[RMDB]
RNA sequence: GGGAACGACUCGAGUAGAGUCGAAAACUUGAUCAACUAAUACAAUGCCAUCUUCAUCACGUUUAUACAUAGCACCUGAAGGGCACGAUGCAACGCAACUUGGAUUCAAGCAAUGUUCACAUAAACGUAACAGGACGAUGUUCGCAUCGUCCUGUUAAAAAGAAACAACAACAACAAC
Reactivity to 2A3 in 0.01 (KOAc 150mM, MgCl2 10mM, bicine 150mM(pH8.5), 24C), signal-to-noise 2, nucleotides 027 to 126: c020u020u090g010a020u160c040a010a080c030u080a100a120u120a140c120a040a040u070g010c020c020a040u010c030u000u030c020a030u040c040a030c030g030u000u050u130a110u050a040c040a060u140a030g000c010a030c010c050u030g080a120a020g000g050g000c030a020c030g000a000u020g050c030a090a020c020g000c040a040a130c150u010u040g040g020a180u230u110c030a060a020g060c030a100a000u100g000u080u050c020a020c000a060u140a150a120a030c040g060
Reactivity to DMS in 0.01 (KOAc 150mM, MgCl2 10mM, bicine 150mM(pH8.5), 24C), signal-to-noise 2, nucleotides 027 to 126: c010u010u010g010a050u000c050a070a090c120u010a050a140u000a070c070a150a050u000g000c020c030a070u020c050u010u010c020a070u010c080a080c070g010u000u020u000a000u020a110c150a100u000a080g000c010a050c040c070u000g000a040a110g000g010g000c020a070c080g010a150u000g020c050a010a040c140g020c060a040a050c030u000u010g000g010a130u000u000c030a060a030g010c060a020a020u000g020u010u010c070a110c130a050u010a000a110a050c220g020